[RMDB]
RNA sequence: GGGAACGACUCGAGUAGAGUCGAAAAGACGCCUUUAGAAGAAGAGGCUAGGGGGUAUUCCGGUGUGGGAUACUUAGUAAUAUGCAACGCUAAUUGCAUAAGAUUGUAGGACGGAAUUUACAGUUUUUAGAGAUAAGCACGUUCGCGUGCUUAUCAACAUCUAUUAGAUCUUCGGAUCUAAUAGAUGAAAAGAAACAACAACAACAAC
Reactivity to 2A3 in 0.01 (KOAc 150mM, MgCl2 10mM, bicine 150mM(pH8.5), 24C), signal-to-noise 7, nucleotides 027 to 156: g050a010c060g010c010c010u080u070u080a180g030a260a020g030a050a010g010a040g020g000c020u040a060g010g000g000g010g020u040a030u040u030c040c040g080g050u170g020u150g050g030g010a020u030a080c020u040u040a020g020u060a030a100u010a020u060g000c000a010a020c060g040c220u120a080a080u070u010g000c010a010u010a030a060g070a080u080u160g040u080a030g000g050a010c020g020g040a030a030u130u130u100a120c060a030g020u010u000u000u050u160a110g030a000g000a050u000a000a000g000c000a000c010g010u030u070c180g010c010g080u000g000c000u000u000a000u000c000a000a000
Reactivity to DMS in 0.01 (KOAc 150mM, MgCl2 10mM, bicine 150mM(pH8.5), 24C), signal-to-noise 2, nucleotides 027 to 156: g000a110c070g040c030c010u010u000u010a090g000a190a180g010a150a160g010a050g000g040c030u000a050g010g010g030g020g040u000a040u010u010c030c020g010g050u010g020u000g020g000g000a090u010a040c030u000u020a080g040u000a070a120u000a030u010g000c010a020a050c040g020c160u010a060a150u000u000g010c000a040u000a050a100g000a130u000u030g010u000a080g000g000a100c030g020g020a090a130u000u010u020a090c060a110g010u000u000u000u010u000a140g020a260g010a050u000a010a010g010c000a020c000g010u000u010c300g030c040g040u000g000c000u010u000a010u000c000a050a090
An RNA of 207 nucleotides, treated with 2A3 and DMS and read out base by base.
The DMS profile rests on 4,237 reads.
It was measured as part of the RMDB library M2RFPK.
Conditions: 150 mM KOAc, 10 mM MgCl2 and 150 mM bicine (pH 8.5), 24 C.
For DMS the reverse transcriptase was MarathonRT.
Reactivities are rounded to 0.1 and cut off at 0 and 3.
2A3 adducts were read by reverse transcription with SuperScript II with manganese.